[RMDB]
RNA sequence: GGGAACGACUCGAGUAGAGUCGAAAAAAGCAGAACUGGCGAUGUGGGAUGAACCAAACGCAGAGUUAAGGUGCCGGAAUAUACACUUAUCAGACACCACAAAAGGUGUUAGUUCAUCUAGACAGCCCUUACUUGUCAAGUUCGCUUGACAAGUAAGAAAAGAAACAACAACAACAAC
Reactivity to DMS in 0.01 (KOAc 150mM, MgCl2 10mM, bicine 150mM(pH8.5), 24C), signal-to-noise 3, nucleotides 027 to 126: a070a060g020c110a120g030a120a120c110u000g010g000c020g010a110u000g010u040g000g000g000a030u010g010a020a040c020c050a040a030a020c020g000c010a080g010a120g000u000u000a070a110g030g000u000g010c010c000g020g000a040a080u000a090u000a120c260a100c240u000u000a030u010c040a070g010a010c000a000c000c000a080c090a060a070a070a120g000g010u000g000u000u000a090g010u000u000c000a010u000c010u000a050g010a070c060a140g010c020c020
Reactivity to 2A3 in 0.01 (KOAc 150mM, MgCl2 10mM, bicine 150mM(pH8.5), 24C), signal-to-noise 3, nucleotides 027 to 126: a000a000g070c050a020g020a130a030c060u040g000g010c010g090a160u050g000u050g080g020g010a010u000g010a010a010c000c010a100a010a010c020g000c010a020g020a010g210u110u080a130a020g020g000u000g020c020c010g050g000a060a010u120a020u070a050c080a010c130u080u060a030u080c000a010g020a030c010a010c010c010a020c060a050a060a000a010g040g000u010g000u010u010a000g000u020u010c010a010u000c000u020a030g040a090c000a040g050c010c000